[RMDB]
RNA sequence: GGGAACGACUCGAGUAGAGUCGAAAAGAAAGCAGUUUCUUGCUUCAUUCUCAGGGCUGAACACUGUUGAUUACUUCACAGAUAAAGCUGUUCUUCCAAAGGGAAUUGAACAAAACCAGUUUUGUCAAUUCAAUACCCAUUUCGAUGGGUAUUGAAUAAAAGAAACAACAACAACAAC
Reactivity to 2A3 in 0.01 (KOAc 150mM, MgCl2 10mM, bicine 150mM(pH8.5), 24C), signal-to-noise 5, nucleotides 027 to 126: g090a010a040a000g010c030a040g020u050u130u110c060u110u050g000c020u030u040c010a040u060u000c010u000c030a010g100g040g000c020u030g020a040a010c070a010c070u020g110u260u140g090a060u100u170a140c120u090u070c020a000c010a010g050a100u110a100a090a030g000c050u040g020u000u010c000u040u000c010c030a230a190a110g190g000g000a060a060u150u170g020a080a020c020a020a080a010a040c030c020a040g020u020u050u070u080g060u070c040a040
Reactivity to DMS in 0.01 (KOAc 150mM, MgCl2 10mM, bicine 150mM(pH8.5), 24C), signal-to-noise 6, nucleotides 027 to 126: g020a070a020a020g020c030a080g010u000u010u010c070u010u000g000c050u000u000c060a100u000u000c000u000c020a200g020g010g010c040u010g000a040a080c110a160c030u000g000u000u010g010a040u000u010a120c200u010u000c020a040c040a030g000a120u010a080a080a070g000c160u010g010u000u000c020u000u000c010c010a100a140a150g010g010g000a020a020u000u020g010a020a030c040a040a040a070a080c130c100a100g010u000u000u000u000g000u000c130a090

Record summary
Conditions: 150 mM KOAc, 10 mM MgCl2 and 150 mM bicine (pH 8.5), 24 C. The record gives the reactivity of an RNA of 177 nucleotides to 2A3 and DMS. DMS adducts were read by reverse transcription with MarathonRT. Reactivities are given for positions 27 through 126. High DMS reactivity at an A or C suggests that its Watson-Crick edge is free.